Background: The record gives the reactivity of an RNA of 207 nucleotides to 2A3. Values are in units of 0.01, from 0 to 300, in steps of 10. The data come from the RNA Mapping Database (RMDB), library OK3TST. The reactions ran in a buffer of 150 mM KOAc, 10 mM MgCl2 and 150 mM bicine (pH 8.5), at 24 C.
RNA sequence: GGGAACGACUCGAGUAGAGUCGAAAAUAACUUUGAAUGUCUCUACAAUACCCGUUGAUAACUCAGUGGAGCCAGGCUUUGGGGUAGCGGCCCUGAGCUUGCAGGGUUUCUCGCCACUGGGGCUGACCACGCCCCCAGCUGUGACCGUGGGUGUGGACAUAUCGCCCCAUUUCGAUGGGGCGAUAUGAAAAGAAACAACAACAACAAC
Reactivity to 2A3 in 0.01 (KOAc 150mM, MgCl2 10mM, bicine 150mM(pH8.5), 24C), signal-to-noise 2, nucleotides 027 to 156: u040a080a010c120u110u070u170g160a210a050u110g090u000c010u020c000u110a060c030a060a190u070a150c020c040c060g000u000u060g120a160u070a190a060c020u010c000a000g010u020g000g060a020g060c080c000a020g020g010c000u070u190u300g000g010g030g000u040a100g110c050g090g090c040c000c000u010g010a010g010c040u040u050g010c040a030g000g000g120u000u100u050c070u020c030g050c000c000a030c000u020g010g010g010g010c050u110g040a080c000c010a010c010g000c010c000c030c000c000a120g020c020u120g110u200g300a140c050c060g010u060g010g000g000u030g000u000g010g000a010